[RMDB]
RNA sequence: GGGAACGACUCGAGUAGAGUCGAAAAGCUGCACUUCGGUGCAGCAAAUCAUUCAAUAUUGCCGGUUUGAACGAAAUUGAUCAGUUCACCGGGAGCAUUGUAUCGAAAAUCAGAUGUUCGCAUCUGACCUAGAUGGCAACUUCGGUUGCCAUCUAGGAAAAGAAACAACAACAACAAC
Reactivity to 2A3 in 0.01 (KOAc 150mM, MgCl2 10mM, bicine 150mM(pH8.5), 24C), signal-to-noise 1, nucleotides 027 to 126: g000c010u000g000c000a010c050u040u050c210g090g020u000g010c000a000g010c040a000a000a000u060c000a000u000u090c030a000a040u040a010u030u040g220c000c000g000g000u080u190u290g020a000a000c010g010a040a110a180u210u180g060a130u150c200a140g040u010u000c010a000c020c020g000g000g000a000g040c000a000u030u000g020u060a050u090c100g090a020a020a000a190u020c000a030g040a010u000g040u000u100c300g020c040a020u020c000u000g030a020
The record gives the reactivity of an RNA of 177 nucleotides to 2A3. It was measured as part of the RMDB library RFMREP. The reactions ran in a buffer of 150 mM KOAc, 10 mM MgCl2 and 150 mM bicine (pH 8.5), at 24 C.